[RMDB]
RNA sequence: GGGAACGACUCGAGUAGAGUCGAAAAAGAAAUAGCGAUAAUCGUAUGAGAAAUGUCCUUCACAUAGCGCUACGCACAGAACUAUUAGUAGCGCAAUAGCUAUUGAAGGACAUUACCUGCCAAAAAACUCUAUGUUUUGGUUCGCCAAAACAUAGAGAAAAGAAACAACAACAACAAC
Reactivity to 2A3 in 0.01 (KOAc 150mM, MgCl2 10mM, bicine 150mM(pH8.5), 24C), signal-to-noise 2, nucleotides 027 to 126: a020g140a010a040a030u120a050g030c040g070a040u200a110a120u190c030g050u080a040u160g060a040g050a040a060a010u000g000u000c010c020u020u010c020a060c020a020u050a020g010c010g020c060u040a000c000g030c030a070c020a150g150a190a030c050u090a090u300u210a080g010u010a010g030c000g020c000a020a010u040a020g000c020u020a000u160u020g010a000a010g000g020a000c000a000u000u000a000c000c020u050g030c050c020a070a270a080a030a110a200
Reactivity to DMS in 0.01 (KOAc 150mM, MgCl2 10mM, bicine 150mM(pH8.5), 24C), signal-to-noise 3, nucleotides 027 to 126: a060g020a100a120a060u010a080g000c040g000a190u000a080a080u000c070g020u000a060u000g000a080g010a050a030a020u000g000u000c000c010u000u010c000a010c300a040u000a000g000c000g030c060u000a000c000g010c110a040c160a080g010a100a070c180u000a150u010u010a090g040u000a060g020c020g000c040a010a010u010a090g000c070u000a020u000u010g010a020a000g000g000a010c000a000u000u000a060c060c050u000g030c050c080a010a050a110a100a030a070
The record gives the reactivity of an RNA of 177 nucleotides to 2A3 and DMS. Reactivities are rounded to 0.1 and cut off at 0 and 3. The 2A3 profile rests on 1,639 reads. The RNA was probed in 150 mM KOAc, 10 mM MgCl2 and 150 mM bicine (pH 8.5) at 24 C. For 2A3 the reverse transcriptase was SuperScript II with manganese.